Chemical mapping of a 177-nucleotide RNA with 2A3 and DMS. For 2A3, 776 sequencing reads were counted.
[RMDB]
RNA sequence: GGGAACGACUCGAGUAGAGUCGAAAAAGGAAAGGAGCGGAACUCUACCAGAGUGUGCAGAAGAUGCUCCGAGCACGCAACGUCCCAGCAACUGUGGACCUCUGCUACGCAAUCCUCAGAAUGAAGAGAGCUUACUCUGUUUCGACAGAGUAAGCUCAAAAGAAACAACAACAACAAC
Reactivity to 2A3 in 0.01 (KOAc 150mM, MgCl2 10mM, bicine 150mM(pH8.5), 24C), signal-to-noise 1, nucleotides 027 to 126: a000g050g010a090a080a010g020g010a030g000c030g030g000a010a060c010u000c000u010a030c000c000a020g110a020g280u110g040u080g080c100a020g050a300a000g010a040u040g030c030u000c000c010g000a000g000c020a030c010g030c010a000a240c030g000u000c000c000c000a000g060c000a040a120c110u070g000u230g060g040a020c000c000u060c040u010g000c000u020a010c140g000c020a010a110u000c000c010u040c010a060g120a220a020u190g110a200a040g140a000
Reactivity to DMS in 0.01 (KOAc 150mM, MgCl2 10mM, bicine 150mM(pH8.5), 24C), signal-to-noise 1, nucleotides 027 to 126: a010g000g010a070a060a130g000g010a040g060c000g000g000a120a180c070u000c000u010a030c050c040a110g000a160g000u000g010u060g030c020a020g000a020a070g010a300u000g020c010u000c010c010g010a140g000c000a090c240g020c000a060a020c300g000u000c000c000c020a030g010c160a040a130c060u010g000u010g000g010a070c080c000u000c050u000g000c030u030a090c160g030c030a130a180u000c020c020u000c080a080g000a190a060u010g000a060a130g020a170